[RMDB]
RNA sequence: GGGAACGACUCGAGUAGAGUCGAAAAGAUGAGAAUACGUGACUUGGUCAGAGGCGGAAAGCCACAAGCACGAACGAUCCAGUAGAGUAUCGAUCCGCCAACAGAUGCACGUUGUGAUCGUGCUAGAGAGUAAUAAUGCCUUCGGGCAUUAUUACUCAAAAGAAACAACAACAACAAC
Reactivity to DMS in 0.01 (KOAc 150mM, MgCl2 10mM, bicine 150mM(pH8.5), 24C), signal-to-noise 5, nucleotides 027 to 126: g020a100u020g000a090g020a140a080u020a100c020g010u010g010a090c030u000u000g000g000u040c120a080g000a120g010g010c000g010g010a060a080a150g010c010c010a100c070a050a060g000c000a060c050g000a100a060c100g000a070u010c020c040a150g010u030a070g000a100g010u010a030u000c040g000a110u010c010c010g010c030c030a060a100c150a110g000a060u040g020c050a020c100g000u000u010g020u010g000a060u020c060g000u020g000c000u000a020g000a300
Reactivity to 2A3 in 0.01 (KOAc 150mM, MgCl2 10mM, bicine 150mM(pH8.5), 24C), signal-to-noise 4, nucleotides 027 to 126: g080a060u200g020a030g090a150a110u190a120c030g000u010g090a160c000u030u000g030g040u190c100a040g030a090g150g010c040g040g190a250a060a020g000c000c000a010c060a000a030g010c020a000c020g030a020a070c070g010a030u010c000c000a040g050u140a040g030a020g040u070a010u090c010g020a040u020c030c040g010c090c000a120a050c020a090g080a080u110g000c020a000c050g070u050u050g070u050g070a060u140c020g000u010g000c000u040a050g050a000

Notes:
An RNA of 177 nucleotides, treated with DMS and 2A3 and read out base by base. The data come from the RNA Mapping Database (RMDB), library OK1LIB. Conditions: 150 mM KOAc, 10 mM MgCl2 and 150 mM bicine (pH 8.5), 24 C. For 2A3, 1,888 sequencing reads were counted. For DMS, 9,938 sequencing reads were counted. For DMS the reverse transcriptase was MarathonRT.